Conditions: 150 mM KOAc, 10 mM MgCl2 and 150 mM bicine (pH 8.5), 24 C. Structure probing data (DMS and 2A3) for a 177-nucleotide construct. The DMS profile rests on 3,118 reads. 2A3 adducts were read by reverse transcription with SuperScript II with manganese. High DMS reactivity at an A or C suggests that its Watson-Crick edge is free. The data come from the RNA Mapping Database (RMDB), library OK1LIB.

RNA sequence: GGGAACGACUCGAGUAGAGUCGAAAAGGCUACACAUGCGCGGCGCGUGAUUAUACCAACUUACUUUUUACCUUACCGUUUUUUAAAGGCGGUGUGUGGUUGGCGGUAAGGUCGUCGCGCAUGGAAAGGGAAUGAUAAUCUUCGGAUUAUCAUUCCCAAAAGAAACAACAACAACAAC
Reactivity to DMS in 0.01 (KOAc 150mM, MgCl2 10mM, bicine 150mM(pH8.5), 24C), signal-to-noise 2, nucleotides 027 to 126: g030g060c130u010a060c100a120c030a000u000g030c000g010c000g000g040c000g000c210g000u020g000a130u000u020a070u000a290c030c060a070a260c010u010u000a040c030u020u030u040u000u000a020c050c030u030u000a040c000c000g000u000u000u000u020u030u040a030a190a090g000g000c020g000g000u000g000u000g000u030g020g000u000u000g000g010c150g000g020u000a000a010g000g030u010c010g000u000c000g000c000g000c000a000u000g030g000a080a070a120
Reactivity to 2A3 in 0.01 (KOAc 150mM, MgCl2 10mM, bicine 150mM(pH8.5), 24C), signal-to-noise 5, nucleotides 027 to 126: g160g000c050u120a030c050a000c000a070u000g000c000g000c000g000g010c020g000c040g070u090g080a210u100u120a070u070a080c030c030a060a040c050u100u100a030c010u110u300u060u140u150a070c040c030u040u040a010c010c020g070u010u000u000u010u080u280a170a180a030g030g000c010g000g020u050g010u010g020u020g010g030u040u020g040g000c110g100g000u030a030a030g050g020u060c000g010u000c010g000c020g000c000a000u000g000g000a020a010a010